The data come from the RNA Mapping Database (RMDB), library OK1LIB. This 177-nucleotide RNA was probed chemically with 2A3. For 2A3, 350 sequencing reads were counted. For 2A3 the reverse transcriptase was SuperScript II with manganese. Reactivities are given for positions 27 through 126.

RNA sequence: GGGAACGACUCGAGUAGAGUCGAAAACAUUGCAACUACUGCCGCUGCGCGUGUCAGCAGUGCUCUUCUCUUUAUGGGAUGUUCUAUCAUUACGUAUGGUCUUUUCAGUAUGGUAUCACAUUUUUCCGGGACGGUCGCUAUUCGUAGCGACCGUCCCAAAAGAAACAACAACAACAAC
Reactivity to 2A3 in 0.01 (KOAc 150mM, MgCl2 10mM, bicine 150mM(pH8.5), 24C), signal-to-noise 1, nucleotides 027 to 126: c060a150u050u250g000c000a000a000c000u280a000c020u070g000c020c000g010c020u070g030c020g000c000g040u060g020u110c000a020g000c000a030g270u050g050c030u030c040u130u030c000u000c000u070u300u090a240u200g040g000g000a000u000g050u000u000c020u000a020u000c000a100u000u260a040c040g120u120a090u100g150g000u000c000u030u270u110u200c000a040g040u000a050u030g000g000u000a090u000c030a030c030a060u000u000u000u000u180c070c130